[RMDB]
RNA sequence: GGGAACGACUCGAGUAGAGUCGAAAAGACACCAGAGAACAUCAAGAGGAUAGCAAGGGUGGUAGACGCUGUCUCCAUCAGCCUCGAUGCGCCUAGCCCAGCGAUCCACGACGCUAUAAGGGGGUACCCUCGCCUCCACUUUCGAGUGGAGGCGAGGAAAAGAAACAACAACAACAAC
Reactivity to 2A3 in 0.01 (KOAc 150mM, MgCl2 10mM, bicine 150mM(pH8.5), 24C), signal-to-noise 1, nucleotides 027 to 126: g000a030c010a030c040c000a000g000a000g000a200a130c070a090u130c110a110a050g070a000g050g040a120u080a210g060c030a070a000g260g000g000u000g020g010u130a070g000a000c030g050c300u290g040u000c000u090c000c000a000u000c020a000g040c000c000u000c080g000a010u090g030c020g000c000c000u080a040g020c000c000c000a010g000c000g150a080u000c020c010a160c190g170a110c000g000c030u070a030u010a230a100g000g000g000g000g000u090a020c000

The data come from the RNA Mapping Database (RMDB), library OK1LIB. Structure probing data (2A3) for a 177-nucleotide construct. For 2A3, 431 sequencing reads were counted. Reactivities are given for positions 27 through 126. The RNA was probed in 150 mM KOAc, 10 mM MgCl2 and 150 mM bicine (pH 8.5) at 24 C.